An RNA of 207 nucleotides, treated with 2A3 and read out base by base.
Conditions: 150 mM KOAc, 10 mM MgCl2 and 150 mM bicine (pH 8.5), 24 C.

RNA sequence: GGGAACGACUCGAGUAGAGUCGAAAAAAGGAGCCGUUCCACGCAGGUCGCGAACAAGAUGAAGGCGUAGCAAGUUCAGGUCGCCGCGCACGAACUGGCGCUCGAUCUCCGCCUCGCUCGAGUAGGUUUCCCCGGGGAUCCCUGUUCGAGCCCUUGCCCGAUAACACGAGUUCGCUCGUGUUAUCGGAAAAGAAACAACAACAACAAC
Reactivity to 2A3 in 0.01 (KOAc 150mM, MgCl2 10mM, bicine 150mM(pH8.5), 24C), signal-to-noise 2, nucleotides 027 to 156: a000a000g100g000a020g020c020c010g020u000u060c040c010a110c020g060c020a050g140g000u150c070g020c030g070a050a040c060a120a120g060a100u300g000a160a030g060g040c040g060u100a020g080c060a100a050g010u030u070c060a050g000g040u080c010g010c080c070g020c020g000c000a110c150g070a150a020c060u170g060g050c020g030c040u000c000g060a070u000c010u040c030c010g000c010c000u040c000g000c000u000c000g010a000g000u040a020g080g070u000u010u040c000c040c000c000g010g000g000g000a030u060c050c210c000u020g060u040u090c020g050a020g060c010c010c000u020u090g000c000